[RMDB]
RNA sequence: GGGAACGACUCGAGUAGAGUCGAAAAGAUAUGGAGAGCUGUCCGACGAUCCUACCCACCUUACUCGGAAACGAGUAAGAGGGAUUAGGACUGCUCUCCUAAGUCAAAACGCUCCUUCGGGAGCGAACCAUAGCCCUAGGUUCGCCUAGGGCUAUGGAAAAGAAACAACAACAACAAC
Reactivity to 2A3 in 0.01 (KOAc 150mM, MgCl2 10mM, bicine 150mM(pH8.5), 24C), signal-to-noise 2, nucleotides 027 to 126: g030a020u030a020u110g010g000a000g000a010g000c040u030g010u000c010c010g050a060c170g050a070u100c020c020u070a140c090c030c020a080c010c000u000u020a000c000u010c010g030g000a040a020a040c010g010a000g000u000a010a010g020a040g020g010g000a020u030u180a050g000g010a000c010u010g000c000u000c000u000c000c000u000a020a010g010u000c000a000a040a070a100c030g000c000u010c010c010u020u070c210g070g000g000a000g000c000g000a020a020
Reactivity to DMS in 0.01 (KOAc 150mM, MgCl2 10mM, bicine 150mM(pH8.5), 24C), signal-to-noise 3, nucleotides 027 to 126: g000a050u000a300u000g000g000a000g010a010g010c000u000g000u000c000c000g000a110c300g000a100u010c040c020u010a120c050c030c110a300c100c010u020u000a000c000u000c010g020g000a060a070a060c000g010a010g000u000a020a000g000a090g000g020g010a060u000u000a250g020g000a000c000u000g010c010u000c010u000c000c000u000a000a050g000u000c030a040a100a110a150c030g030c010u000c000c000u000u000c240g040g010g030a020g030c000g000a000a040
Description: Structure probing data (2A3 and DMS) for a 177-nucleotide construct. The data come from the RNA Mapping Database (RMDB), library TTRDEL. For 2A3 the reverse transcriptase was SuperScript II with manganese. For DMS the reverse transcriptase was MarathonRT. Conditions: 150 mM KOAc, 10 mM MgCl2 and 150 mM bicine (pH 8.5), 24 C.